[RMDB]
RNA sequence: GGGAACGACUCGAGUAGAGUCGAAAAGAUAUGGAUAUAGCAACAGCAUGCCAUCGGAAACGAUGGACAUGACAUGCUGCAUCCUAAGUCAAAGCUAUGGCUCUUGCUUCGGCAAGAGCCAUAGCAACAAAGGCUAGUUGUUCGCAACUAGCCUUUGAAAAGAAACAACAACAACAAC
Reactivity to DMS in 0.01 (KOAc 150mM, MgCl2 10mM, bicine 150mM(pH8.5), 24C), signal-to-noise 3, nucleotides 027 to 126: g010a030u000a300u000g000g010a010u010a070u000a040g010c000a020a070c230a150g000c010a000u000g000c000c000a020u010c020g010g010a110a060a110c010g000a010u000g020g010a040c000a000u000g000a110c040a160u000g010c000u010g010c060a040u000c000c000u000a060a110g000u010c040a070a110a200g010c000u030a010u000g000g010c000u000c000u000u010g000c000u000u000c230g020g020c000a010a000g000a000g020c000c000a000u000a000g000c010a020a050